[RMDB]
RNA sequence: GGGAACGACUCGAGUAGAGUCGAAAACGCGGAUACUUCGGUAUCCGCGAAAGAAGCGAAGGCGUACCGAAAUAUAACGGUAAUAAAUCGCAAAACGCCUAAAAAGCCUAGACUUCGGUCUAGGCAACGCCUAGUUAACGUUCGCGUUAACUAGGCGAAAAGAAACAACAACAACAAC
Reactivity to 2A3 in 0.01 (KOAc 150mM, MgCl2 10mM, bicine 150mM(pH8.5), 24C), signal-to-noise 1, nucleotides 027 to 126: c000g020c000g020g000a000u020a010c010u080u130c180g040g000u010a000u010c000c000g020c000g000a000a000a030g040a060a040g010c030g090a030a000g030g000c040g030u010a010c000c000g060a020a230a010u290a000u060a150a070c000g010g030u010a000a020u060a000a140a010u110c000g000c000a000a150a000a000c010g020c020c000u100a160a140a010a020a020g030c010c000u010a000g000a030c000u010u030c300g040g000u000c010u010a020g000g000c000a020a000
Reactivity to DMS in 0.01 (KOAc 150mM, MgCl2 10mM, bicine 150mM(pH8.5), 24C), signal-to-noise 1, nucleotides 027 to 126: c040g050c000g030g000a000u020a010c000u010u010c190g020g070u000a000u000c000c000g040c020g000a000a070a080g020a120a140g040c010g000a020a050g000g040c190g010u000a060c000c000g010a140a040a270u010a060u000a150a180c000g010g000u000a040a040u000a100a080a170u000c050g000c060a080a050a130a040c140g000c020c010u040a070a010a140a070a090g000c000c000u000a000g020a040c000u000u040c270g000g030u000c000u010a000g000g010c000a060a000